[RMDB]
The record gives the reactivity of an RNA of 177 nucleotides to DMS and 2A3. DMS adducts were read by reverse transcription with MarathonRT. Conditions: 150 mM KOAc, 10 mM MgCl2 and 150 mM bicine (pH 8.5), 24 C. Reactivities are given for positions 27 through 126. 2A3 adducts were read by reverse transcription with SuperScript II with manganese. 2A3 is a SHAPE reagent: it acylates the 2'-hydroxyl of flexible nucleotides of all four kinds.

RNA sequence: GGGAACGACUCGAGUAGAGUCGAAAAACUGCUAAGUUCAAUGUAACUAAAGCAGAUGUUAAAGAAGCUAAUAUGAACAUUACAGCUAUUAACAUCACUUACGGUGAUGAUGAAACCAUAACUGUAAAUUAUGGUCCGCAUUCGUGCGGACCAUAAUAAAAGAAACAACAACAACAAC
Reactivity to DMS in 0.01 (KOAc 150mM, MgCl2 10mM, bicine 150mM(pH8.5), 24C), signal-to-noise 1, nucleotides 027 to 126: a190c040u000g020c020u000a100a050g010u000u000c000a130a020u120g000u120a000a000c020u000a050a180a000g020c020a020g030a090u090g000u110u000a040a080a130g060a170a060g050c020u150a010a130u070a100u030g040a120a090c100a280u030u020a090c040a000g000c050u000a050u000u000a140a070c000a000u000c060a120c030u040u030a100c230g010g000u000g000a000u000g040a090u020g000a140a130a110c150c130a010u000a000a040c000u000g000u000a000a060
Reactivity to 2A3 in 0.01 (KOAc 150mM, MgCl2 10mM, bicine 150mM(pH8.5), 24C), signal-to-noise 2, nucleotides 027 to 126: a000c050u040g000c000u030a040a050g000u000u010c040a000a250u280g130u250a220a000c000u000a000a000a270g000c000a000g000a050u000g000u020u100a050a070a120g090a110a000g020c140u070a130a030u180a060u190g150a120a000c110a000u060u030a020c100a000g000c150u000a000u030u070a070a110c010a000u000c000a000c040u000u100a000c030g120g000u000g000a000u000g000a000u160g160a130a040a000c090c000a080u000a110a000c000u010g060u060a030a030